[RMDB]
RNA sequence: GGGAACGACUCGAGUAGAGUCGAAAACUUCUGCUUCAGCCUCUCAAGUAGCUGGGAUUACAGGUGCCCGCCACCAUACCCAACUGUUUUUAGUAGAGACCGGGUUUCACUAUGUUGGCCAGGCUGGCGUUUUCUUCUAAUUCGUUAGAAGAAAACGAAAAGAAACAACAACAACAAC
Reactivity to 2A3 in 0.01 (KOAc 150mM, MgCl2 10mM, bicine 150mM(pH8.5), 24C), signal-to-noise 2, nucleotides 027 to 126: c010u070u060c050u030g060c020u070u040c030a010g020c000c010u040c000u000c030a030a060g020u020a000g060c030u000g020g000g050a100u090u130a070c070a140g010g000u030g000c040c090c070g060c070c020a020c000c010a040u060a050c000c020c020a030a050c020u040g060u020u060u040u060u150a050g040u030a010g030a000g000a050c060c040g100g000g000u010u090u040c020a020c030u130a100u190g150u150u040g140g000c000c030a030g020g000c020u020g030g000
Reactivity to DMS in 0.01 (KOAc 150mM, MgCl2 10mM, bicine 150mM(pH8.5), 24C), signal-to-noise 5, nucleotides 027 to 126: c060u010u010c030u010g010c050u010u000c050a070g010c030c010u000c030u000c060a050a080g000u000a030g010c030u000g000g010g010a100u000u010a070c150a070g000g010u000g000c040c110c110g010c130c010a020c020c010a140u000a080c070c010c010a040a050c060u010g000u010u000u000u000u010a060g010u000a080g000a050g010a070c060c130g000g010g000u000u000u000c030a050c080u000a050u000g010u000u000g000g010c050c070a040g010g020c050u000g000g000